[RMDB]
RNA sequence: GGGAACGACUCGAGUAGAGUCGAAAAGAAAAUGGCAAGACGGGUCGGGGCUGGCAUAGAAAGGCCGGUAGGCAGUGCAGCGGAAGGUAAGAAAACCGCCAAGCGAAAUUAAGUCGGGAAAACUGAAAUGUGGUAUCAAUUUCGAUUGAUACCACAUAAAAGAAACAACAACAACAAC
Reactivity to DMS in 0.01 (KOAc 150mM, MgCl2 10mM, bicine 150mM(pH8.5), 24C), signal-to-noise 3, nucleotides 027 to 126: g000a120a050a090a100u020g010g030c060a070a070g020a070c090g020g010g000u030c060g000g000g000g010c010u000g000g000c030a090u020a100g000a140a140a110g010g000c010c010g000g040u030a070g010g040c040a050g020u020g000c070a110g000c010g020g000a080a050g020g010u020a090a170g000a080a090a140a080c020c070g020c000c060a060a120g000c030g000a060a050a080u050u050a040a140g000u010c030g000g000g010a100a050a090a130c060u010g000a040a070
Reactivity to 2A3 in 0.01 (KOAc 150mM, MgCl2 10mM, bicine 150mM(pH8.5), 24C), signal-to-noise 1, nucleotides 027 to 126: g160a000a080a000a020u030g070g060c000a050a040g030a060c030g000g040g000u030c010g000g100g000g000c030u080g020g010c050a000u010a160g140a000a020a000g070g000c000c000g020g030u050a120g020g110c000a000g050u040g010c000a020g000c010g020g060a100a030g140g040u110a040a010g120a070a120a020a020c000c030g000c040c000a010a020g010c030g070a080a000a000u180u100a060a060g050u040c100g030g000g000a050a050a000a000c010u060g020a000a000